Background: This 207-nucleotide RNA was probed chemically with 2A3. Conditions: 150 mM KOAc, 10 mM MgCl2 and 150 mM bicine (pH 8.5), 24 C. 2A3 adducts were read by reverse transcription with SuperScript II with manganese.
[RMDB]
RNA sequence: GGGAACGACUCGAGUAGAGUCGAAAAAUUUCGGUCCUAUGCAAUAUGAACCCAUGAACCAUGUCAGGUCCUGACGGAAGCAGCAUUAAGUGGAUCAUCAUAUGUGCCGUAGGGUAGCCGAGAUUUAGAAAUGCUUAGAGUCUUCGGACUCUAAGCAGUGUGUAAACCGCUUCGGCGGUUUACACACAAAAGAAACAACAACAACAAC
Reactivity to 2A3 in 0.01 (KOAc 150mM, MgCl2 10mM, bicine 150mM(pH8.5), 24C), signal-to-noise 1, nucleotides 027 to 156: a010u030u010u000c080g050g150u300c000c000u010a020u030g000c000a010a000u000a020u010g010a000a000c000c000c010a000u070g010a020a020c070c020a050u060g080u180c010a000g040g020u040c000c020u100g250a070c110g020g000a020a000g000c030a000g000c000a000u080u000a100a030g040u000g010g000a000u060c000a000u000c000a010u030a020u000g270u040g080c030c010g020u000a000g050g030g010u040a010g000c000c000g000a010g000a010u000u000u010a010g020a050a060a000u040g010c010u000u000a000g000a000g020u030c000u020u020c120g070g000a000c010u000c000u010a000a000g000c000a010
The 2A3 profile rests on 612 reads.
Reactivities are given for positions 27 through 156.